[RMDB]
RNA sequence: GGGAACGACUCGAGUAGAGUCGAAAAGAAAGAAAGAAAGUUCAUUGUUUAUCGGAAACUUUAAACUAUAACCAUUCAAACUUUUCCAGAAGUUAGUUUGAAUAGAAAUUAAAAAGAAACUUCUGACUAACCUUAUCAUGCUUCGGCAUGAUAAGAACGGAUAGUGAUGGUUCGCCAUCACUAUCCGAAAAGAAACAACAACAACAAC
Reactivity to 2A3 in 0.01 (KOAc 150mM, MgCl2 10mM, bicine 150mM(pH8.5), 24C), signal-to-noise 1, nucleotides 027 to 156: g040a000a000a000g060a040a040a050g100a100a080a000g010u010u040c060a060u060u150g060u160u110u110a290u220c120g030g010a120a010a030c000u030u000u000a020a130a000c040u030a020u200a260a040c010c000a010u000u000c000a000a000a000c020u010u010u000u000c040c000a000g000a000a000g000u000u040a000g000u000u000u000g020a010a000u060a160g020a030a030a000u220u300a060a050a010a020a010g000a000a000a000c000u000u040c000u000g000a000c040u020a040a020c000c010u000u000a000u000c000a000u000g000c000u000u020c110g050g000c020a000u020g000a000u020a000a000g000a010a000
Source: RMDB library M2RFPK, as collected in RNAgym. The record gives the reactivity of an RNA of 207 nucleotides to 2A3. High 2A3 reactivity points to a flexible backbone, as in loops and unpaired stretches. Conditions: 150 mM KOAc, 10 mM MgCl2 and 150 mM bicine (pH 8.5), 24 C. 2A3 adducts were read by reverse transcription with SuperScript II with manganese.